The data come from the RNA Mapping Database (RMDB), library OK2TST. Chemical mapping of a 177-nucleotide RNA with 2A3 and DMS.

RNA sequence: GGGAACGACUCGAGUAGAGUCGAAAAGUGAAUUUCAUCGAUUACGUAUAGGGAUAGGUCAUCCUGGACAUAAAGAUCUAGUCCAUCAAUACGUACUCAGCAGGCCUUCUAUGCACGACAGGCAACACCAGCAUGGAUGGUUCGCCAUCCAUGCUGGAAAAGAAACAACAACAACAAC
Reactivity to 2A3 in 0.01 (KOAc 150mM, MgCl2 10mM, bicine 150mM(pH8.5), 24C), signal-to-noise 2, nucleotides 027 to 126: g140u090g060a120a220u060u090u220c080a120u180c030g020a010u010u030a010c000g000u020a040u090a070g000g010g020a010u010a000g070g000u000c020a040u020c040c100u020g030g050a080c030a160u240a110a170a040g010a010u000c000u010a010g200u000c000c020a030u080c050a060a050u010a010c000g020u020a030c040u010c040a020g040c040a040g080g050c000c010u010u000c040u040a160u140g130c070a040c100g060a030c110a010g030g000c010a040a030c020a000
Reactivity to DMS in 0.01 (KOAc 150mM, MgCl2 10mM, bicine 150mM(pH8.5), 24C), signal-to-noise 2, nucleotides 027 to 126: g000u010g010a050a050u010u000u000c200a170u000c090g010a050u000u000a010c000g030u000a010u000a290g010g000g000a040u000a050g000g000u000c030a130u010c110c090u000g030g020a120c150a130u010a010a120a120g010a110u000c020u030a010g000u000c000c030a090u020c040a130a030u000a010c000g000u000a020c190u000c040a150g000c250a090g010g000c000c000u010u000c030u000a030u010g000c050a070c040g000a070c300a000g000g010c030a020a080c240a150
Record summary
Values cover nucleotides 27 to 126. For 2A3, 1,324 sequencing reads were counted. The RNA was probed in 150 mM KOAc, 10 mM MgCl2 and 150 mM bicine (pH 8.5) at 24 C. The DMS profile rests on 789 reads. 2A3 adducts were read by reverse transcription with SuperScript II with manganese. As a SHAPE reagent, 2A3 marks flexible, mostly unpaired nucleotides at the ribose 2'-OH.